[RMDB]
RNA sequence: GGGAACGACUCGAGUAGAGUCGAAAAACACCGAGCUGUACGCAGCUCGGUGAAGACCAUGAUAGGAUAACCUAGAGUCUCUGAACCAUUUCGUGUUUGCACAAACAAUGCUCUUUGUCUGAGUCAACCCUCUUCGCAACUUCGGUUGCGAAGAGGGAAAAGAAACAACAACAACAAC
Reactivity to 2A3 in 0.01 (KOAc 150mM, MgCl2 10mM, bicine 150mM(pH8.5), 24C), signal-to-noise 2, nucleotides 027 to 126: a000c000a000c000c000g000a050g000c030u000g020u070a040c290g040c090a000g020c000u000c000g000g000u000g000a000a000g040a010c010c010a090u080g030a020u130a050g030g000a000u080a210a150c040c040u040a030g020a030g100u000c010u000c000u050g060a170a110c100c060a070u110u150u060c150g030u110g040u100u050u120g140c050a020c050a020a050a010c050a010a110u090g020c000u000c080u030u130u150g120u100c050u090g010a000g000u070c030a010a130